An RNA of 177 nucleotides, treated with 2A3 and DMS and read out base by base. DMS adducts were read by reverse transcription with MarathonRT. For 2A3 the reverse transcriptase was SuperScript II with manganese. DMS (dimethyl sulfate) methylates the pairing face of unpaired adenines and cytosines.
RNA sequence: GGGAACGACUCGAGUAGAGUCGAAAAGCACCGCGAUGGAACCGUCACGACCGACGGGGCGACGGAUUGGGGUGGCUCGGCGGGGUUCUGGACGUCCCCGUGAUGGAGCGCGGCCCGGAGACCAGGCCUUAAACGUUUUGUUCGCAAAACGUUUAAGAAAAGAAACAACAACAACAAC
Reactivity to 2A3 in 0.01 (KOAc 150mM, MgCl2 10mM, bicine 150mM(pH8.5), 24C), signal-to-noise 7, nucleotides 027 to 126: g040c010a010c040c010g030c030g030a050u130g050g060a030a050c000c000g010u010c020a030c110g130a130c050c070g060a080c060g000g020g020g010c030g020a050c020g020g020a030u060u130g040g000g010g010u040g050g010c020u020c030g060g000c030g000g010g000g000u130u080c050u110g070g070a060c050g060u060c000c000c010c000g020u050g070a140u100g120g020a030g030c070g010c010g040g030c000c030c000g010g020a040g010a010c020c010a020g060g000c000
Reactivity to DMS in 0.01 (KOAc 150mM, MgCl2 10mM, bicine 150mM(pH8.5), 24C), signal-to-noise 6, nucleotides 027 to 126: g020c090a110c010c010g000c050g000a090u020g010g000a110a110c030c020g010u010c020a110c100g010a130c160c100g000a060c100g020g010g010g020c040g000a090c060g000g010a100u010u010g010g000g000g020u000g000g000c040u000c040g000g000c020g000g010g010g000u010u030c010u020g000g010a150c110g000u000c000c010c000c020g020u010g000a100u020g000g000a040g000c050g000c040g000g000c030c020c030g020g000a130g000a080c030c020a060g000g020c090

Description
It was measured as part of the RMDB libraries RFM100 and RFMREP.